[RMDB]
Structure probing data (2A3 and DMS) for a 207-nucleotide construct. For 2A3 the reverse transcriptase was SuperScript II with manganese. For 2A3, 6,356 sequencing reads were counted.
RNA sequence: GGGAACGACUCGAGUAGAGUCGAAAACGCGUCCCGACGCGGAGGAGACGCUGCUGACGCACACGGACGAGCCGCCCCCGUACGAGGAGGCGGUGAAACUGGGUCUGCCCACCACGCGGCCCGUGGCGCCUCUGGCCACCGGGGUGCUGAAACCCAGGUAACCUAUCAAAUUCGUUUGAUAGGUUACAAAAGAAACAACAACAACAAC
Reactivity to 2A3 in 0.01 (KOAc 150mM, MgCl2 10mM, bicine 150mM(pH8.5), 24C), signal-to-noise 5, nucleotides 027 to 156: c050g010c000g010u010c030c000c010g010a050c050g020c150g010g030a030g010g020a030g000a020c030g020c020u020g010c000u020g020a020c010g010c020a020c000a050c130g030g050a040c040g030a030g000c000c000g000c010c010c000c000c000g170u270a210c160g040a190g060g000a080g010g010c000g000g010u020g010a030a030a000c060u050g000g010g050u120c110u200g140c010c020c000a030c020c000a060c060g010c010g010g010c020c010c000g000u010g000g000c020g010c030c000u010c020u060g170g100c000c000a010c020c010g000g000g000g010u010g000c000u010g020a070a050a030c000c000c000a010g000
Reactivity to DMS in 0.01 (KOAc 150mM, MgCl2 10mM, bicine 150mM(pH8.5), 24C), signal-to-noise 2, nucleotides 027 to 156: c060g010c010g000u110c010c020c000g030a100c070g010c070g020g000a300g020g030a070g000a030c030g000c010u010g040c040u020g030a120c020g030c040a170c110a070c070g030g010a070c060g000a300g000c030c010g020c010c000c010c000c000g000u000a110c140g010a210g020g000a060g020g010c010g000g000u000g000a020a040a080c050u000g010g000g000u000c070u000g020c030c020c040a050c050c040a100c110g010c020g010g000c010c000c110g020u000g000g010c040g040c000c000u000c020u010g020g000c000c000a150c040c000g050g000g070g000u000g000c020u020g000a060a090a240c010c020c000a160g010